The record gives the reactivity of an RNA of 177 nucleotides to DMS and 2A3. The reactions ran in a buffer of 150 mM KOAc, 10 mM MgCl2 and 150 mM bicine (pH 8.5), at 24 C. The data come from the RNA Mapping Database (RMDB), library OK2TST. For DMS, 2,644 sequencing reads were counted. For 2A3, 3,112 sequencing reads were counted. 2A3 adducts were read by reverse transcription with SuperScript II with manganese.
RNA sequence: GGGAACGACUCGAGUAGAGUCGAAAAAGCUUACUGAUGAUGAACUUGCUUCCGUAGAUGUACGCUUGACGCCAGAGGUACGUACAGUGCUUACUGUCGAAGGUGCAGUUGCAUCGCGAGCUACACGCGACCCAACAGUUUUCGAACUGUUGGGUCGAAAAGAAACAACAACAACAAC
Reactivity to DMS in 0.01 (KOAc 150mM, MgCl2 10mM, bicine 150mM(pH8.5), 24C), signal-to-noise 3, nucleotides 027 to 126: a040g000c030u010u010a090c080u000g030a100u010g000a100u010g010a040a050c070u010u020g020c060u010u000c010c020g030u000a260g010a080u020g020u000a020c100g000c010u010u000g010a200c070g040c080c030a080g010a090g030g030u010a010c030g000u010a120c180a080g000u000g020c050u000u000a070c000u010g020u000c020g020a130a240g000g000u000g000c030a080g000u010u000g000c010a030u000c000g000c050g000a000g020c010u000a090c120a080c180g020
Reactivity to 2A3 in 0.01 (KOAc 150mM, MgCl2 10mM, bicine 150mM(pH8.5), 24C), signal-to-noise 3, nucleotides 027 to 126: a000g030c030u050u070a050c080u190g160a270u060g000a020u040g040a070a030c010u100u180g020c000u170u060c030c020g050u040a030g030a130u050g020u060a020c090g000c030u040u040g090a030c020g030c020c010a050g030a040g040g010u060a000c010g000u080a130c040a110g040u020g050c020u060u040a200c020u070g020u010c000g020a090a020g000g020u040g000c030a070g050u140u090g000c000a000u010c010g040c020g010a020g000c010u040a020c090a000c060g110